[RMDB]
Notes:
The record gives the reactivity of an RNA of 207 nucleotides to DMS and 2A3. 2A3 adducts were read by reverse transcription with SuperScript II with manganese. Conditions: 150 mM KOAc, 10 mM MgCl2 and 150 mM bicine (pH 8.5), 24 C.
RNA sequence: GGGAACGACUCGAGUAGAGUCGAAAAAAUGCCGCCUCAGUUCCAAGCUCUUUCGUGGCACUGUAAACCGUCCUAUUGAGUUAGGGGCAGUCAACCACGUUGCGAAGCUAAAUUAUCUGGUCGAGAGUUACGAUUCCCUACUUCGGUAGGGAAUCAACCCUAGAUACAGUUUCGACUGUAUCUAGGGAAAAGAAACAACAACAACAAC
Reactivity to DMS in 0.01 (KOAc 150mM, MgCl2 10mM, bicine 150mM(pH8.5), 24C), signal-to-noise 1, nucleotides 027 to 156: a060a120u000g020c020c040g000c000c000u020c000a090g000u020u000c020c020a180a300g000c000u000c000u000u000u000c030g030u000g030g000c040a010c000u020g000u010a020a130a100c030c090g030u010c000c000u000a050u010u000g020a300g030u000u000a040g010g000g000g010c010a070g000u000c010a040a000c030c010a060c030g010u000u000g010c020g000a100a060g030c020u000a020a050a120u000u000a120u000c050u010g000g030u000c050g000a140g000a100g010u000u000a040c080g000a070u000u000c000c000c000u010a000c010u000u010c300g050g040u000a020g030g010g030a000a000u000c010a020a190
Reactivity to 2A3 in 0.01 (KOAc 150mM, MgCl2 10mM, bicine 150mM(pH8.5), 24C), signal-to-noise 3, nucleotides 027 to 156: a000a010u110g040c020c030g000c010c000u050c020a080g060u090u060c040c020a060a000g010c020u010c030u010u050u040c040g020u030g000g020c110a010c020u020g050u100a090a070a080c020c010g090u060c060c020u080a120u070u130g090a160g260u090u080a050g000g000g000g000c000a000g030u020c000a000a070c000c000a000c020g010u010u030g090c120g080a040a010g010c040u070a020a120a100u150u130a110u090c070u050g000g050u050c070g030a010g000a020g200u050u060a020c070g000a000u000u000c000c010c000u000a010c000u000u030c060g080g000u000a000g010g000g000a000a000u000c000a000a000